This 177-nucleotide RNA was probed chemically with DMS and 2A3. 2A3 adducts were read by reverse transcription with SuperScript II with manganese. For DMS the reverse transcriptase was MarathonRT. It was measured as part of the RMDB library OK2TRN. The 2A3 profile rests on 2,725 reads.
[RMDB]
RNA sequence: GGGAACGACUCGAGUAGAGUCGAAAAUUCUACACCGAGACUAUGGCAGGACCUACAUUGAAGUAUCAAAAUAGGAUAACAGAAGUGCCUGGGCUUUAAUGGUCUUUUGGUGAGAACUUAAGACCAGCAACGCAUUGGAAUUCGUUCCAAUGCGUUGAAAAGAAACAACAACAACAAC
Reactivity to DMS in 0.01 (KOAc 150mM, MgCl2 10mM, bicine 150mM(pH8.5), 24C), signal-to-noise 3, nucleotides 027 to 126: u010u000c010u000a160c040a050c050c010g010a060g000a030c010u000a050u000g000g010c210a100g000g010a090c050c010u000a090c110a050u010u000g010a250a240g000u000a040u000c010a030a070a090a150u020a100g010g020a080u000a050a050c050a090g000a300a040g030u000g000c050c020u010g000g010g020c050u000u000u000a080a050u000g020g010u010c010u010u000u020u020g080g030u000g010a090g010a000a040c050u000u000a070a080g000a220c000c010a090g010
Reactivity to 2A3 in 0.01 (KOAc 150mM, MgCl2 10mM, bicine 150mM(pH8.5), 24C), signal-to-noise 2, nucleotides 027 to 126: u020u000c010u050a130c010a010c000c000g020a000g010a010c030u030a020u070g000g010c060a010g010g050a140c040c000u030a020c050a050u000u030g040a110a030g060u020a040u060c020a000a080a200a140u210a190g130g060a030u030a160a040c020a010g090a100a030g060u030g000c020c020u020g000g050g000c010u100u040u120a040a050u040g000g000u010c000u010u050u090u060g010g030u020g010a020g000a020a000c000u060u050a050a000g030a060c010c000a010g030